[RMDB]
RNA sequence: GGGAACGACUCGAGUAGAGUCGAAAAGCAAAGACACCAACAGCAAACAAGUCACCUUCAGCGACGAAGUCACAAGCUACGAAAUCUCACCACGCAGCAACACCGACAACUCCGAGUAUACCACAAUCUCAAGCACAAGCAACACCAGUCCAAAACAGCUGGAAUUACCUUUCGAGGUAAUUCCAGCAAAAGAAACAACAACAACAAC
Reactivity to 2A3 in 0.01 (KOAc 150mM, MgCl2 10mM, bicine 150mM(pH8.5), 24C), signal-to-noise 1, nucleotides 027 to 156: g020c030a100a060a000g040a100c060a020c050c020a050a090c010a010g080c020a010a060a140c040a030a000g020u100c050a040c030c010u150u110c020a000g030c110g050a020c040g060a120a000g000u010c020a000c000a060a010g000c030u010a010c060g040a010a020a170u100c090u010c000a050c030c000a040c090g000c000a020g000c000a000a000c030a000c080c000g010a010c010a080a080c010u050c010c050g040a000g110u060a020u090a090c000c000a020c040a040a070u010c060u050c080a060a100g000c030a010c000a050a010g020c050a000a000c000a020c040c000a000g070u060c030c020a020a000a090a090c090a070